[RMDB]
RNA sequence: GGGAACGACUCGAGUAGAGUCGAAAAAUACACAAGCAGUAGGACUCAGCGACCGUCACAACAAGGUUGUGCUGGUAUCCGACGGUCGUAUAGCCCUGUCUUGCAGGUUGCCUUGCACUGACGUGCCACACCAUUUACAGAUUCGUCUGUAAAUGAACUGCGGUAUUUCUUUCGAGAAAUACCGCAGAAAAGAAACAACAACAACAAC
Reactivity to 2A3 in 0.01 (KOAc 150mM, MgCl2 10mM, bicine 150mM(pH8.5), 24C), signal-to-noise 1, nucleotides 027 to 156: a000u140a010c000a000c000a000a010g020c010a040g010u190a130g030g030a090c000u080c180a020g000c000g010a000c000c000g030u010c000a030c030a030a050c060a140a130g210g040u080u030g000u090g070c110u060g000g130u040a160u050c040c020g000a000c000g000g000u010c020g040u080a090u160a160g010c010c000c000u010g000u110c000u000u060g000c020a030g040g020u000u150g030c010c000u000u090g000c020a050c020u080g130a080c200g040u040g000c030c000a150c000a010c030c020a000u000u000u000a000c000a000g000a030u020u160c240g040u010c110u050g020u000a000a000a000u010g000a040a000